Source information:
Structure probing data (DMS and 2A3) for a 177-nucleotide construct. For 2A3 the reverse transcriptase was SuperScript II with manganese. Conditions: 150 mM KOAc, 10 mM MgCl2 and 150 mM bicine (pH 8.5), 24 C. DMS adducts were read by reverse transcription with MarathonRT. The DMS profile rests on 2,000 reads.
[RMDB]
RNA sequence: GGGAACGACUCGAGUAGAGUCGAAAAAUCAAGUCUUCGGGAUGAAGAACGUAUUUACAAGAACACAUGAGUUUUUUCAAGAGUCCUGGAUAUACUAUCCUGAUCGGCCUGACUUAAUCAGGAUCGACUAACAAGGACCUUUCGAGGUCCUUGUUAGAAAAGAAACAACAACAACAAC
Reactivity to DMS in 0.01 (KOAc 150mM, MgCl2 10mM, bicine 150mM(pH8.5), 24C), signal-to-noise 3, nucleotides 027 to 126: a080u000c120a070a080g030u000c040u000u000c000g010g030g000a120u010g010a050a030g000a080a070c130g010u010a030u000u010u010a080c170a100a080g000a050a050c060a070c130a140u000g010a050g020u000u000u000u030u000u000c030a040a080g020a160g010u000c020c000u000g010g020a040u000a040u000a040c050u010a060u000c000c020u000g000a080u000c060g010g020c010c010u010g000a040c200u010u010a120a190u000c020a030g000g000a080u020c040g010a080
Reactivity to 2A3 in 0.01 (KOAc 150mM, MgCl2 10mM, bicine 150mM(pH8.5), 24C), signal-to-noise 3, nucleotides 027 to 126: a010u050c020a040a030g000u000c020u020u010c040g110g050g040a050u190g070a090a040g030a020a010c010g040u070a100u060u150u130a090c070a120a040g100a150a020c080a030c030a180u100g090a090g220u110u060u010u000u050u090c070a090a050g050a040g100u020c030c010u020g000g000a010u040a000u010a140c070u050a030u030c000c030u040g000a110u010c000g000g020c010c020u020g030a050c020u130u140a070a080u090c000a000g050g000a160u060c000g010a030